[RMDB]
RNA sequence: GGGAACGACUCGAGUAGAGUCGAAAACGGGAGUUGUCACUUCAUCCUUUCGAGUAGUGCUUGCUUGCCCUUGCCGAUGACAAGGCUGUUCACGUCUUCGCCCGGUGGCAUCGGGAUGACCCUGCUGCUCGUCCAUUAUGUUCGCAUAAUGGACGAGAAAAGAAACAACAACAACAAC
Reactivity to 2A3 in 0.01 (KOAc 150mM, MgCl2 10mM, bicine 150mM(pH8.5), 24C), signal-to-noise 2, nucleotides 027 to 126: c030g040g020g020a040g010u120u070g090u100c050a000c090u060u030c050a110u100c010c000u100u160u140c100g030a030g040u100a020g010u060g070c020u050u090g000c020u020u040g070c000c020c000u010u060g030c020c010g080a080u090g030a020c030a100a040g050g010c050u040g100u060u110c060a070c080g020u000c000u070u050c100g000c020c000c000g040g010u030g010g030c010a030u030c030g000g000g010a060u090g070a040c000c000c030u070g040c040u050g000
Reactivity to DMS in 0.01 (KOAc 150mM, MgCl2 10mM, bicine 150mM(pH8.5), 24C), signal-to-noise 3, nucleotides 027 to 126: c120g010g010g000a100g010u000u000g000u000c070a120c060u000u010c040a100u010c050c050u000u000u000c110g000a080g010u000a040g010u010g010c040u000u000g000c030u000u000g020c040c040c080u000u010g030c040c030g030a140u010g020a070c100a070a100g000g000c030u010g020u000u000c120a090c180g010u000c040u000u000c110g000c040c010c020g010g010u000g010g010c040a050u000c050g010g010g000a080u000g010a130c050c020c000u010g030c110u010g010